[RMDB]
Source: RMDB library M2PK90, as collected in RNAgym. The record gives the reactivity of an RNA of 177 nucleotides to 2A3 and DMS. Reactivities are given for positions 27 through 126. The 2A3 profile rests on 2,433 reads. The DMS profile rests on 1,360 reads.

RNA sequence: GGGAACGACUCGAGUAGAGUCGAAAAGUAAAGGCGAGUGAGAAGAUCACUGAAUGCCAAAAGCACGCUUAGAAACGGACAUCUCUGAGCAAAAGUGCACGCAAUAAGCGAAAGAUGCCGAAAAAAAGUAUGAAACACGAUUCGUCGUGUUUCAUACAAAAGAAACAACAACAACAAC
Reactivity to 2A3 in 0.01 (KOAc 150mM, MgCl2 10mM, bicine 150mM(pH8.5), 24C), signal-to-noise 2, nucleotides 027 to 126: g040u070a080a060a020g030g000c060g000a010g020u030g020a030g000a220a080g040a080u010c000a010c020u000g120a090a060u140g000c010c000a040a070a000a000g010c010a000c040g000c010u020u010a020g030a030a100a010c020g030g050a010c020a030u010c040u010c000u050g010a010g020c000a000a040a000a230g050u040g030c040a010c070g000c000a020a300u160a300a030g010c010g010a050a010a010g020a010u060g040c010c060g180a100a020a010a010a000a000a000
Reactivity to DMS in 0.01 (KOAc 150mM, MgCl2 10mM, bicine 150mM(pH8.5), 24C), signal-to-noise 2, nucleotides 027 to 126: g040u010a040a110a100g000g000c010g000a040g010u000g010a010g010a140a150g000a120u000c010a020c010u000g020a120a040u010g030c000c000a000a040a090a160g010c000a040c020g010c020u010u000a050g000a030a060a060c020g000g020a040c050a020u000c030u010c020u000g010a110g000c030a040a050a040a130g010u010g040c100a100c080g010c000a030a090u000a050a090g030c010g010a080a040a030g000a050u000g000c000c020g010a000a020a010a080a110a130a100